[RMDB]
RNA sequence: GGGAACGACUCGAGUAGAGUCGAAAAUUAAUUGAAAUUACACCGAGAUUGUUCAGAUAUUUGAGGACUUGGGUUUUGAAUACCCUUAAGAAAAGACCAGUCUGAGGCUGUAAGGUCGUCCAGAUUCCUUCUACUAGACCUUCGGGUCUAGUAGAAGAAAAGAAACAACAACAACAAC
Reactivity to DMS in 0.01 (KOAc 150mM, MgCl2 10mM, bicine 150mM(pH8.5), 24C), signal-to-noise 2, nucleotides 027 to 126: u040u020a050a070u030u080g000a060a030a100u010u000a070c050a110c000c000g000a050g000a060u000u010g000u010u000c040a040g010a120u020a090u040u040u000g000a150g000g010a100c070u000u030g000g000g030u000u020u000u010g020a110a090u050a030c010c000c000u000u000a040a090g000a130a050a120a060g010a020c030c020a080g010u000c000u000g000a080g030g070c170u000g000u030a020a040g010g000u000c020g040u020c060c090a040g000a210u010u040c110
Reactivity to 2A3 in 0.01 (KOAc 150mM, MgCl2 10mM, bicine 150mM(pH8.5), 24C), signal-to-noise 3, nucleotides 027 to 126: u060u050a000a000u080u140g110a070a020a040u050u030a010c020a000c010c010g030a020g020a050u000u040g030u020u030c000a020g100a180u040a190u180u300u170g130a150g010g050a050c020u010u020g000g030g000u000u000u050u090g100a030a030u060a050c030c030c000u010u050a060a020g080a010a090a000a030g020a000c030c030a000g000u000c030u020g050a090g080g040c050u000g010u040a040a050g020g070u010c040g000u020c000c010a030g080a170u110u140c010

This 177-nucleotide RNA was probed chemically with DMS and 2A3. The 2A3 profile rests on 1,636 reads. Conditions: 150 mM KOAc, 10 mM MgCl2 and 150 mM bicine (pH 8.5), 24 C. Source: RMDB library OK1LIB, as collected in RNAgym.